[RMDB]
RNA sequence: GGGAACGACUCGAGUAGAGUCGAAAAGAAUCUCACUUGGGCGGGUGCUUUAGUGACUCCAGCGCGUAUUAGUUGGGGAUUUAUGGAGAUUAUGAAUACGUUGAAAUGAUUACGCGCAAAGUAAGAAGGGUAUUGUUAAGUUCGCUUAACAAUACCCAAAAGAAACAACAACAACAAC
Reactivity to DMS in 0.01 (KOAc 150mM, MgCl2 10mM, bicine 150mM(pH8.5), 24C), signal-to-noise 2, nucleotides 027 to 126: g000a160a100u010c030u020c040a060c040u000u010g000g020g000c040g000g010g040u000g010c020u010u020u020a110g010u030g000a100c000u000c060c050a120g000c010g000c050g000u000a010u010u000a090g010u000u020g040g020g000g010a050u000u050u010a030u000g000g010a080g000a060u000u000a090u010g000a060a030u000a080c180g000u020u010g000a110a080a040u000g000a070u020u000a000c000g000c010g000c050a130a020a100g000u020a070a020g020a090a170
Reactivity to 2A3 in 0.01 (KOAc 150mM, MgCl2 10mM, bicine 150mM(pH8.5), 24C), signal-to-noise 2, nucleotides 027 to 126: g020a100a120u000c010u010c060a000c010u010u120g000g020g000c010g000g070g100u080g000c000u080u130u020a040g040u000g050a020c010u010c000c040a060g000c020g020c020g000u040a120u140u090a030g060u000u060g000g000g000g000a010u010u100u000a050u090g060g000a090g030a100u080u180a020u150g070a020a000u110a080c090g010u030u110g130a000a000a140u090g050a020u060u060a000c000g000c030g000c030a010a010a010g140u180a030a030g130a130a020
The record gives the reactivity of an RNA of 177 nucleotides to DMS and 2A3. Source: RMDB library OK1LIB, as collected in RNAgym. For 2A3, 1,099 sequencing reads were counted. The reactions ran in a buffer of 150 mM KOAc, 10 mM MgCl2 and 150 mM bicine (pH 8.5), at 24 C. Values cover nucleotides 27 to 126.